[RMDB]
Description:
An RNA of 170 nucleotides, treated with 2A3 and DMS and read out base by base. The 2A3 profile rests on 79,974 reads. Conditions: 150 mM KOAc, 10 mM MgCl2 and 150 mM bicine (pH 8.5), 24 C. Source: RMDB library 15KLIB, as collected in RNAgym.

RNA sequence: GGGAACGACUCGAGUAGAGUCGAAAACCACCCAUCGGGGUCCGACGUUCCUACCCUUUCUUACCUGUGGCCGGCAUGGUCCCAGCCUCCUCGCUGGCGCCGGCUGGGCAACAUUCCGAGGGGACCGCUAGCGUAAGAUUCGUCUUACGCAAAAGAAACAACAACAACAAC
Reactivity to 2A3 in 0.01 (KOAc 150mM, MgCl2 10mM, bicine 150mM(pH8.5), 24C), signal-to-noise 9, nucleotides 027 to 129: c010c000a060c010c000c000a090u110c060g010g000g010g040u040c040c030g070a100c040g040u030u020c010c010u030a090c010c010c000u050u160u060c050u070u110a140c010c020u080g020u120g100g010c000c000g020g020c040a090u140g040g030u100c020c010c000a010g010c000c000u100c010c000u070c050g030c020u030g020g000c030g010c010c000g010g000c000u010g000g000g010c010a050a030c010a130u130u060c020c010g020a030g000g010g000g000a010c000c030g050c130u090a030
Reactivity to DMS in 0.01 (KOAc 150mM, MgCl2 10mM, bicine 150mM(pH8.5), 24C), signal-to-noise 9, nucleotides 027 to 129: c020c040a160c070c020c010a060u040c070g010g010g010g000u060c050c070g030a100c050g020u010u000c010c000u030a110c030c010c020u000u040u030c010u020u000a110c090c080u040g030u050g000g010c020c030g000g030c000a110u000g050g000u050c290c020c000a050g010c000c080u030c060c030u010c110g020c000u010g020g040c150g020c040c010g020g010c010u040g020g020g030c060a070a060c030a090u050u030c070c080g030a030g000g000g000g000a070c060c070g010c080u010a080